[RMDB]
Source information:
An RNA of 177 nucleotides, treated with DMS and 2A3 and read out base by base. Conditions: 150 mM KOAc, 10 mM MgCl2 and 150 mM bicine (pH 8.5), 24 C. Reactivities are given for positions 27 through 126. It was measured as part of the RMDB library RFMREP.

RNA sequence: GGGAACGACUCGAGUAGAGUCGAAAAAGUCAGGACCUAACGCGUACCCAAACGGGGAAGUGGAUGGACAACAGGUUAAUAUUCCUGUACUACCUUAUACUGCGAUGGAGGGACGGAGAAGUGAAAGCAUAUUCGUUGUGUUCGCACAACGAAUAUGAAAAGAAACAACAACAACAAC
Reactivity to DMS in 0.01 (KOAc 150mM, MgCl2 10mM, bicine 150mM(pH8.5), 24C), signal-to-noise 4, nucleotides 027 to 126: a080g010u020c050a070g010g000a130c060c030u020a040a130c110g010c020g010u000a280c020c000c010a040a060a140c170g010g010g000g000a060a140g010u000g000g000a150u000g000g000a080c160a070a040c030a020g010g010u000u010a070a080u010a180u020u000c000c000u000g000u010a050c120u000a140c020c020u010u010a100u010a110c130u000g000c060g010a070u000g010g010a110g010g010g010a050c070g010g000a090g020a070a070g010u000g000a110a070a090g020
Reactivity to 2A3 in 0.01 (KOAc 150mM, MgCl2 10mM, bicine 150mM(pH8.5), 24C), signal-to-noise 3, nucleotides 027 to 126: a000g090u070c040a040g040g050a050c000c020u030a100a020c020g000c020g040u100a050c010c020c000a120a180a060c100g020g010g010g010a030a030g020u040g020g070a090u100g000g010a020c010a060a010c020a050g080g050u080u090a160a000u090a170u190u100c010c000u000g010u030a020c050u040a000c010c000u060u040a090u060a080c040u060g020c010g070a050u060g040g000a030g010g030g000a010c030g040g020a060g000a080a030g000u100g130a110a020a020g000